[RMDB]
RNA sequence: GGGAACGACUCGAGUAGAGUCGAAAAAUGGUAGUAAACGCAACACAAGAAAAAGAUCGCAAAUACGUUGGCGAAACUUUUAGCGCAAUUAAGGCGUGGCCUUUCAGCGGGAACGAUCAUGAAAUUACAACCGGAAGCCUAAAGGGAUACGUAGUCAGAGAGAACUAGUGUUCGCACUAGUUCUCUCAAAAGAAACAACAACAACAAC
Reactivity to DMS in 0.01 (KOAc 150mM, MgCl2 10mM, bicine 150mM(pH8.5), 24C), signal-to-noise 1, nucleotides 027 to 156: a090u000g010g010u000a040g040u020a040a180a040c110g010c050a130a140c020a070c080a100a140g000a050a100a010a070a190g000a300u000c010g010c000a110a070a090u000a080c120g000u000u000g010g050c000g000a090a070a130c050u000u000u000u040a110g000c060g010c110a070a110u010u010a030a020g000g050c030g020u020g000g000c030c000u010u010u000c050a130g020c050g000g030g020a100a080c040g030a020u020c070a070u020g020a040a060a040u010u000a030c060a030a090c050c000g000g000a080a050g020c140c000u010a040a080a070g060g000g010a040u010a040c030g010u000a120g030u000c010a150
Reactivity to 2A3 in 0.01 (KOAc 150mM, MgCl2 10mM, bicine 150mM(pH8.5), 24C), signal-to-noise 2, nucleotides 027 to 156: a000u070g010g010u030a040g030u050a080a100a050c040g060c040a140a030c050a060c050a140a000g010a130a100a020a000a000g010a070u000c000g000c040a000a000a100u160a170c070g030u060u080g070g000c010g000a020a080a100c020u090u050u080u070a010g000c010g000c030a030a040u160u050a070a000g030g000c020g040u020g010g060c000c030u040u050u060c040a040g000c010g040g000g020a000a060c050g000a020u080c000a030u100g110a070a080a090u110u130a050c030a030a000c010c000g000g000a010a000g010c020c000u000a030a000a060g020g000g010a020u030a060c060g030u040a020g100u170c090a020